[RMDB]
RNA sequence: GGGAACGACUCGAGUAGAGUCGAAAAAAGUUACUUUGGGCUCCGGCUCCUUUCACAUCGAACUCUUGUCAGAGUAUAACUGACUAUACCUCUAAACGUGGACCUCGUUCACAAGAGAUGAGCAGUCACAUACUCUAAGGUUCGCCUUAGAGUAUGUAAAAGAAACAACAACAACAAC
Reactivity to 2A3 in 0.01 (KOAc 150mM, MgCl2 10mM, bicine 150mM(pH8.5), 24C), signal-to-noise 5, nucleotides 027 to 126: a000a010g080u080u020a100c070u110u060u050g020g030g000c010u000c050c080g070g000c030u070c060c020u080u190u110c070a070c010a100u120c080g080a090a020c010u010c000u020u060g010u010c020a010g010a000g040u070a240u010a300a010c000u000g020a000c000u020a050u050a060c000c010u040c030u070a120a160a080c080g010u020g000g000a010c010c090u140c180g040u030u000c030a020c010a030a020g030a010g010a060u100g030a030g070c060a010g060u080c030
Reactivity to DMS in 0.01 (KOAc 150mM, MgCl2 10mM, bicine 150mM(pH8.5), 24C), signal-to-noise 6, nucleotides 027 to 126: a100a060g010u010u000a090c070u000u010u000g020g010g010c030u000c070c110g020g000c050u010c020c050u010u000u000c080a060c100a070u010c100g010a150a030c020u000c010u010u000g010u000c010a020g000a020g010u000a020u000a020a040c020u010g000a030c010u010a120u010a090c080c010u010c020u000a060a070a110c160g000u010g000g000a010c020c170u000c300g010u010u000c010a020c030a060a030g000a040g010a040u000g000a140g020c130a070g000u010c140
Structure probing data (2A3 and DMS) for a 177-nucleotide construct. The data come from the RNA Mapping Database (RMDB), library OK2TRN. For 2A3 the reverse transcriptase was SuperScript II with manganese. In probing experiments dimethyl sulfate is read out at A N1 and C N3, which are open when not base-paired.